[RMDB]
RNA sequence: GGGAACGACUCGAGUAGAGUCGAAAACUAUGUACAGACAGUACAGUGGAUAAGGUCUAUCGAUAUCCAACUUCAACAAUGGUACUUGCAGUGGUAUCUAUCAAGAUAGGCAGGCUAUCAUAGAAAGUAGAUGUGUAUUAUUCGUAGUACGCAUCUAAAAAGAAACAACAACAACAAC
Reactivity to 2A3 in 0.01 (KOAc 150mM, MgCl2 10mM, bicine 150mM(pH8.5), 24C), signal-to-noise 6, nucleotides 027 to 126: c010u020a020u060g000u000a000c020a070g210a030c020a020g040u010a000c000a000g020u020g060g010a030u020a040a010g040g010u000c010u010a000u010c020g010a000u000a010u010c010c010a030a050c010u030u010c000a010a020c020a040a130u130g050g010u060a020c000u010u010g000c010a010g010u010g020g000u010a010u000c010u010a110u070c050a060a030g000a010u010a000g010g000c000a000g040g000c020u010a000u020c010a020u010a040g110a030a090a000g050
Reactivity to DMS in 0.01 (KOAc 150mM, MgCl2 10mM, bicine 150mM(pH8.5), 24C), signal-to-noise 9, nucleotides 027 to 126: c020u000a060u000g010u000a010c020a140g000a140c260a140g010u000a010c010a040g010u020g010g000a070u010a050a120g010g010u010c060u010a000u010c050g000a070u010a010u010c000c020a050a110c050u010u010c000a060a100c240a090a050u000g000g010u000a040c040u010u000g000c100a080g010u020g010g020u000a010u000c010u020a080u040c190a070a080g000a010u010a020g000g000c050a080g000g010c120u000a010u000c020a030u010a050g000a080a050a070g010
Chemical mapping of a 177-nucleotide RNA with 2A3 and DMS. It was measured as part of the RMDB library OK1LIB. High DMS reactivity at an A or C suggests that its Watson-Crick edge is free.